Background:
Conditions: 150 mM KOAc, 10 mM MgCl2 and 150 mM bicine (pH 8.5), 24 C. Chemical mapping of a 207-nucleotide RNA with 2A3. Values cover nucleotides 27 to 156. The data come from the RNA Mapping Database (RMDB), library OK3TST.
[RMDB]
RNA sequence: GGGAACGACUCGAGUAGAGUCGAAAAUGUCAGACAGUCAAAACGAACCUUUGCUUUUUCUCCGUUAAGUUCGCCGAGAAUUGACACUUCAGCAUAAGCACCAGCAAGAAGACUGCUGUAAUAGCUGUUUGCGUGUAUUACGGCGCGCAUUUGCUGAACAGAGAUCAGACUUCGGUCUGAUCUCUGUAAAAGAAACAACAACAACAAC
Reactivity to 2A3 in 0.01 (KOAc 150mM, MgCl2 10mM, bicine 150mM(pH8.5), 24C), signal-to-noise 1, nucleotides 027 to 156: u120g000u090c010a040g030a060c030a030g250u040c010a000a040a110a070c040g020a020a060c070c000u110u060u070g030c140u100u180u070u130u070c090u190c070c000g000u040u020a110a020g000u020u060c060g000c030c040g060a090g080a080a040u150u130g030a000c000a010c080u020u020c000a000g040c000a040u020a140a010g000c000a040c110c000a000g000c000a040a010g070a020a080g070a070c180u070g020c000u000g040u060a160a020u040a140g010c010u040g070u110u030u030g030c010g010u000g040u070a170u090u180a070c120g060g010c010g020c000g000c000a060u030u020u020g040c010u000g000a010